[RMDB]
RNA sequence: GGGAACGACUCGAGUAGAGUCGAAAAGACGCUAGCCUGUUCGACAUUACCGUGUUCUGUGAAGAACCCCGUAAAGCCUAUGACCGUGUCCACCUGUCAUCCUACUUCUCUCACCACACCGCGGAAGUAUCAUAAUGACUUUCGAGUCAUUAUGAUAAAAAGAAACAACAACAACAAC
Reactivity to DMS in 0.01 (KOAc 150mM, MgCl2 10mM, bicine 150mM(pH8.5), 24C), signal-to-noise 9, nucleotides 027 to 126: g010a090c070g010c070u010a060g010c040c010u000g010u010u010c040g010a060c060a090u010u010a040c050c080g010u010g010u000u010c010u010g010u040g010a120a050g000a060a080c030c020c020c130g020u020a060a070a110g010c040c030u010a070u020g010a080c050c040g010u010g010u010c020c020a050c040c020u000g010u010c060a080u000c020c010u010a060c060u000u000c030u000c030u000c020a070c040c020a060c050a050c030c020g010c060g010g000a070a080g010
Reactivity to 2A3 in 0.01 (KOAc 150mM, MgCl2 10mM, bicine 150mM(pH8.5), 24C), signal-to-noise 9, nucleotides 027 to 126: g050a010c030g010c070u030a020g040c010c020u050g040u060u070c030g020a020c030a090u050u090a050c020c010g010u020g030u070u020c050u030g080u060g070a060a080g030a060a060c010c010c010c010g050u080a070a040a040g040c010c020u100a120u140g050a060c010c020g040u030g030u050c010c010a020c010c020u030g030u060c010a050u040c010c010u010a050c010u040u030c020u000c010u010c020a040c020c000a030c000a010c010c020g030c020g050g010a070a030g070